Structure probing data (DMS and 2A3) for a 177-nucleotide construct.
RNA sequence: GGGAACGACUCGAGUAGAGUCGAAAACGGCGAGCGUCCCGGACCGGAAGGGCCGCGAGCCCCCGCGCCUGGAGGAAGGAGAAGUCGUAACAAGGUAUCCGUAGGUGAACCUGCGGAUGGAUCCCUCAACUUCGCAGAAUUUCGAUUCUGCGAAGUUAAAAGAAACAACAACAACAAC
Reactivity to DMS in 0.01 (KOAc 150mM, MgCl2 10mM, bicine 150mM(pH8.5), 24C), signal-to-noise 3, nucleotides 027 to 126: c190g000g000c010g010a140g000c040g000u030c000c000c000g000g020a100c080c060g000g040a160a080g020g000g020c070c010g010c130g010a270g000c010c000c000c020c000g000c200g010c030c000u040g000g010a120g000g020a090a050g000g010a120g030a090a090g000u000c050g020u010a080a120c180a090a040g000g000u020a040u000c000c000g060u020a010g000g010u020g010a150a120c020c020u000g000c030g000g000a000u000g000g010a080u020c010c000c000u010c110
Reactivity to 2A3 in 0.01 (KOAc 150mM, MgCl2 10mM, bicine 150mM(pH8.5), 24C), signal-to-noise 3, nucleotides 027 to 126: c060g030g000c020g000a030g030c010g040u040c000c000c030g010g050a070c030c000g070g070a110a010g040g010g010c060c030g090c040g020a020g000c000c000c000c000c000g040c060g020c040c000u040g020g050a080g030g000a060a030g050g040a040g030a130a010g060u050c020g000u080a070a020c060a100a020g070g060u080a010u000c000c000g010u000a000g000g050u160g130a190a290c000c000u010g000c000g000g000a000u010g010g010a030u020c010c000c000u070c010

Description: It was measured as part of the RMDB libraries RFM100 and RFMREP. For 2A3 the reverse transcriptase was SuperScript II with manganese. Conditions: 150 mM KOAc, 10 mM MgCl2 and 150 mM bicine (pH 8.5), 24 C.